[RMDB]
RNA sequence: GGGAACGACUCGAGUAGAGUCGAAAAUCUGAAAGGCAUGAAGCAGGCUCUGCAUUAUUGAACAGUUGUCAGAAGAACGAUAAGCAUUGCAUAUUCUUUUGGAGGAUAGCAGUACUCUAAACAGAUACUUGGAAUUAUGUUUCGACAUAAUUCCAAGAAAAGAAACAACAACAACAAC
Reactivity to 2A3 in 0.01 (KOAc 150mM, MgCl2 10mM, bicine 150mM(pH8.5), 24C), signal-to-noise 2, nucleotides 027 to 126: u040c010u010g080a070a040a060g050g000c030a030u060g060a030a020g000c040a020g030g060c000u000c010u040g020c010a070u080u100a090u080u150g010a050a020c020a040g050u100u110g140u200c030a020g040a120a010g040a110a020c050g020a070u040a110a030g000c040a030u000u070g010c010a050u040a080u130u100c040u060u090u060u080g070g050a010g030g000a000u050a020g010c020a000g030u000a030c020u030c020u060a050a080a050c050a030g060a070u060a150
Reactivity to DMS in 0.01 (KOAc 150mM, MgCl2 10mM, bicine 150mM(pH8.5), 24C), signal-to-noise 5, nucleotides 027 to 126: u000c030u010g020a070a110a100g020g010c030a020u000g000a090a120g010c060a060g010g010c040u000c040u000g010c040a050u000u000a070u010u010g010a050a120c110a090g000u000u010g000u000c060a080g020a090a080g000a080a130c110g000a090u000a070a060g020c030a030u000u000g010c030a100u000a080u000u000c020u000u000u000u000g010g000a060g020g010a060u010a040g010c030a040g010u000a040c030u000c070u010a050a040a090c150a040g010a130u000a100